[RMDB]
RNA sequence: GGGAACGACUCGAGUAGAGUCGAAAAGUGUGGUGCGUUUGCACACGGUGCAAUUUUCUUUGUACGUGACUACGAUCCUGUACAAAACCAGGGUAACGUAUUAGCACGUAUGUUAGAGCACAAGGAACUGCACAAAGACAUUCGUGUCUUUGUGCAGAAAAGAAACAACAACAACAAC
Reactivity to DMS in 0.01 (KOAc 150mM, MgCl2 10mM, bicine 150mM(pH8.5), 24C), signal-to-noise 2, nucleotides 027 to 126: g000u000g070u000g020g020u000g030c040g010u010u020u020g020c010a000c020a110c130g040g030u000g000c010a080a080u000u000u000u000c030u000u040u000g000u000a020c020g020u000g000a060c090u000a020c040g000a030u000c000c000u010g000u010a300c170a080a060a150a060c110c000a020g000g000g020u010a000a040c060g030u010a030u010u000a050g000c000a020c010g000u000a000u000g020u010u000a080g000a140g010c010a020c030a160a110g020g010a070a160
Reactivity to 2A3 in 0.01 (KOAc 150mM, MgCl2 10mM, bicine 150mM(pH8.5), 24C), signal-to-noise 2, nucleotides 027 to 126: g130u140g020u040g080g140u070g070c110g070u060u170u180g000c000a000c010a020c100g000g010u010g000c060a120a100u050u040u040u130c050u030u030u140g030u020a010c040g000u030g070a080c040u000a000c030g010a040u030c000c000u000g030u080a110c140a060a180a090a100c110c000a000g010g000g010u080a210a030c040g000u020a010u060u200a100g030c040a000c010g010u010a000u000g050u000u070a030g010a000g000c020a070c010a100a000g090g000a060a120
An RNA of 177 nucleotides, treated with DMS and 2A3 and read out base by base. High DMS reactivity at an A or C suggests that its Watson-Crick edge is free. Conditions: 150 mM KOAc, 10 mM MgCl2 and 150 mM bicine (pH 8.5), 24 C. It was measured as part of the RMDB library OK2TST.